The record gives the reactivity of an RNA of 177 nucleotides to DMS and 2A3. For DMS, 2,989 sequencing reads were counted. The 2A3 profile rests on 2,423 reads. 2A3 is a SHAPE reagent: it acylates the 2'-hydroxyl of flexible nucleotides of all four kinds. Reactivities are given for positions 27 through 126. The data come from the RNA Mapping Database (RMDB), library OK2TST. DMS adducts were read by reverse transcription with MarathonRT.
[RMDB]
RNA sequence: GGGAACGACUCGAGUAGAGUCGAAAACAGCCACCAUGUCGUCGAUCAGGCCCGGCGAUCCCAACGACCCCGGAACCGUUUGCGGGCCGUUGAUUUCGGCCCGACAACGGGAUCGUGUGCAGGGCUAGAUAUCGCUGUGAUUCGUCACAGCGAUAUCAAAAGAAACAACAACAACAAC
Reactivity to DMS in 0.01 (KOAc 150mM, MgCl2 10mM, bicine 150mM(pH8.5), 24C), signal-to-noise 3, nucleotides 027 to 126: c090a100g030c030c010a120c060c070a080u010g000u000c020g000u010c030g010a100u020c090a150g020g020c030c010c000g020g010c020g000a050u000c010c010c010a170a060c060g020a070c030c020c040c020g000g010a070a100c130c100g000u000u010u000g020c010g000g010g010c000c000g030u010u000g000a180u000u000u010c010g030g020c000c000c000g020a020c040a010a050c000g010g000g000a040u000c000g000u000g020u000g020c070a080g000g000g000c030u000a050
Reactivity to 2A3 in 0.01 (KOAc 150mM, MgCl2 10mM, bicine 150mM(pH8.5), 24C), signal-to-noise 1, nucleotides 027 to 126: c030a010g040c020c010a050c010c010a050u090g050u080c060g040u020c030g040a060u090c060a060g070g040c000c000c000g000g000c020g030a060u010c000c010c000a000a020c040g070a030c000c000c010c020g090g000a050a050c010c010g040u010u080u170g040c000g020g020g000c020c000g000u020u040g050a040u000u180u040c000g010g000c030c000c020g010a010c010a010a010c000g000g000g000a010u030c000g000u010g030u070g070c030a070g000g040g000c000u020a040